[RMDB]
RNA sequence: GGGAACGACUCGAGUAGAGUCGAAAAACGUUGAUAUGGAUUUACUCCGAGGAGACGAACUACCACGAACAGGGGAAACUCUACCCGUGGCGUCUCCGUUUGACAAGUAAGUCCUAAGUCAACAUGCAUGGACCGUACUUCGGUACGGUCAAAAGAAACAACAACAACAAC
Reactivity to 2A3 in 0.01 (KOAc 150mM, MgCl2 10mM, bicine 150mM(pH8.5), 24C), signal-to-noise 3, nucleotides 027 to 129: a000c070g010u000u000g000a000u000a010u060g000g000a000u000u000u020a010c010u020c100c070g060a120g000g000a000g020a000c020g000a020a020c080u240a090c100c000a000c000g010a040a020c010a070g000g000g010g010a000a000a000c000u000c000u010a030c000c010c020g000u000g010g000c000g000u000c010u010c000c000g000u020u030u060g010a000c010a020a000g000u000a010a000g010u000c000c000u000a000a000g000u000c010a000a000c000a010u070g050c020a150u180g110
Reactivity to DMS in 0.01 (KOAc 150mM, MgCl2 10mM, bicine 150mM(pH8.5), 24C), signal-to-noise 4, nucleotides 027 to 129: a090c190g010u030u010g000a040u000a070u060g090g000a000u060u000u000a020c040u020c000c110g060a060g030g040a080g020a030c000g010a090a010c070u030a290c000c010a010c040g050a040a150c210a100g060g020g030g060a000a000a000c010u040c000u000a140c290c150c020g050u010g020g010c000g010u010c000u070c000c040g010u000u030u030g030a100c300a000a000g030u110a000a030g000u030c020c000u030a000a080g000u020c020a000a060c010a050u030g030c090a080u050g100
The record gives the reactivity of an RNA of 170 nucleotides to 2A3 and DMS.
For 2A3, 16,964 sequencing reads were counted.
For 2A3 the reverse transcriptase was SuperScript II with manganese.
Source: RMDB library 15KLIB, as collected in RNAgym.
The DMS profile rests on 9,973 reads.